The record gives the reactivity of an RNA of 207 nucleotides to 2A3 and DMS. The DMS profile rests on 10,837 reads.
[RMDB]
RNA sequence: GGGAACGACUCGAGUAGAGUCGAAAAGGACUCCGUGAGGAGUCCGUGCAGCGAGAGCUGCACAAGGGCUAAGUGACUGUCGGUGCCCCUCCUCUACGAUGUUGAGUAGAGGAGAGUAGUCGUCUCACGAUUUAUAGUGAGACUGACAUGACAGUAGAUCAAUCUACUCAUUCGUGAGUAGAUUGAUAAAAGAAACAACAACAACAAC
Reactivity to 2A3 in 0.01 (KOAc 150mM, MgCl2 10mM, bicine 150mM(pH8.5), 24C), signal-to-noise 3, nucleotides 027 to 156: g010g000a000c000u000c000c000g020u030g020a030g000g010a000g010u000c000c000g000u000g000c000a000g000c010g010a070g000a000g040c000u000g030c000a000c000a010a020g000g000g000c020u090a040a040g070u030g100a010c000u010g000u000c000g010g060u060g000c000c000c000c000u000c000c000u000c000u000a000c000g050a050u110g020u100u040g050a030g000u000a000g000a000g000g000a000g000a000g000u010a010g000u000c000g000u000c000u000c000a010c000g030a040u000u210u080a180u130a050g000u000g000a000g000a000c000u000g000a000c000a000u010g000a000c000a000g000u000a000g010
Reactivity to DMS in 0.01 (KOAc 150mM, MgCl2 10mM, bicine 150mM(pH8.5), 24C), signal-to-noise 4, nucleotides 027 to 156: g060g000a030c000u000c000c000g000u010g000a150g030g010a030g020u010c000c000g010u000g020c020a010g020c000g020a300g000a300g030c000u010g010c000a010c010a070a060g030g010g010c020u000a120a300g020u000g010a050c020u000g010u000c020g010g000u000g020c030c000c010c010u000c000c000u000c010u010a020c010g000a190u000g030u000u000g010a260g010u000a020g020a030g000g000a010g000a020g010u000a040g010u000c000g010u000c000u000c000a020c000g010a270u010u000u010a180u000a090g020u000g000a020g000a010c000u000g020a010c000a050u000g000a020c010a010g010u000a070g000
Reactivities are given for positions 27 through 156. The reactions ran in a buffer of 150 mM KOAc, 10 mM MgCl2 and 150 mM bicine (pH 8.5), at 24 C.